[RMDB]
RNA sequence: GGGAACGACUCGAGUAGAGUCGAAAAGGUAGCCGCACAGUGCAAGUCACCCUCGGCAAGGCGGAGCAGUGAUGAAGGUCGCCGCGCAGUGUUCAAAGCUCGGAUAUACGGUGGCACCCAUGGAACAAUCAAGUGACAUGUUCGCAUGUCACUUGAUAAAAGAAACAACAACAACAAC
Reactivity to 2A3 in 0.01 (KOAc 150mM, MgCl2 10mM, bicine 150mM(pH8.5), 24C), signal-to-noise 2, nucleotides 027 to 126: g050g000u040a000g000c010c010g070c050a080c050a040g040u080g110c070a020a030g020u070c030a040c040c010c000u050c060g030g000c020a040a030g150g000c040g020g020a020g050c050a000g030u110g100a110u050g040a100a040g070g030u070c020g030c050c000g010c020g000c050a070g030u070g080u140u060c060a130a090a010g030c010u020c030g070g010a030u080a010u010a130c050g030g020u030g000g030c020a030c010c000c020a060u140g100g010a080a060c040a030
Reactivity to DMS in 0.01 (KOAc 150mM, MgCl2 10mM, bicine 150mM(pH8.5), 24C), signal-to-noise 3, nucleotides 027 to 126: g000g020u000a080g020c040c050g030c140a110c080a110g030u000g020c060a080a130g000u000c070a070c030c070c030u000c070g020g010c020a140a130g010g020c060g020g010a090g010c030a050g030u000g030a120u020g000a110a120g010g000u000c060g010c020c020g000c100g000c050a060g020u000g010u010u010c090a060a090a130g010c050u000c030g000g000a090u000a040u010a060c060g020g020u000g010g010c030a090c020c030c050a040u000g000g000a080a060c160a080

The record gives the reactivity of an RNA of 177 nucleotides to 2A3 and DMS. For DMS, 2,240 sequencing reads were counted. 2A3 adducts were read by reverse transcription with SuperScript II with manganese. For 2A3, 1,697 sequencing reads were counted. It was measured as part of the RMDB library OK2TST.